[RMDB]
RNA sequence: GGGAACGACUCGAGUAGAGUCGAAAAGUGUUCCUGCCACUGGAUGCUAUCAGCCAAGGUAUGAACUCUGUGUUCGUGCCUGGAACAUCGCUGCUUAGUAAAGGACUGUCCCUCCCAGGAAGCCAGCUGAAUGACGAUCGUUCGCGAUCGUCAUUCAAAAAGAAACAACAACAACAAC
Reactivity to 2A3 in 0.01 (KOAc 150mM, MgCl2 10mM, bicine 150mM(pH8.5), 24C), signal-to-noise 1, nucleotides 027 to 126: g100u030g050u060u060c020c000u010g120c050c030a140c040u010g020g030a030u070g030c010u000a020u090c000a000g030c050c020a100a050g000g000u000a000u010g000a010a020c030u040c270u300g190u070g010u130u000c020g000u000g000c000c010u010g010g010a030a110c060a070u090c050g000c040u050g000c020u050u010a000g060u070a060a000a130g060g000a040c030u000g010u050c000c000c010u050c020c000c010a000g000g020a010a010g010c030c000a000g090c010
Reactivity to DMS in 0.01 (KOAc 150mM, MgCl2 10mM, bicine 150mM(pH8.5), 24C), signal-to-noise 2, nucleotides 027 to 126: g030u010g000u020u030c010c010u020g020c130c030a090c070u000g000g010a160u000g000c040u000a030u010c050a060g020c020c050a260a030g020g000u000a000u010g000a010a010c010u040c300u010g010u010g020u000u000c000g010u000g000c000c010u010g000g010a100a110c220a160u020c160g020c020u000g020c140u000u000a040g000u000a090a100a110g000g000a050c050u010g000u010c000c000c020u010c010c030c020a160g010g020a080a080g000c030c020a040g010c240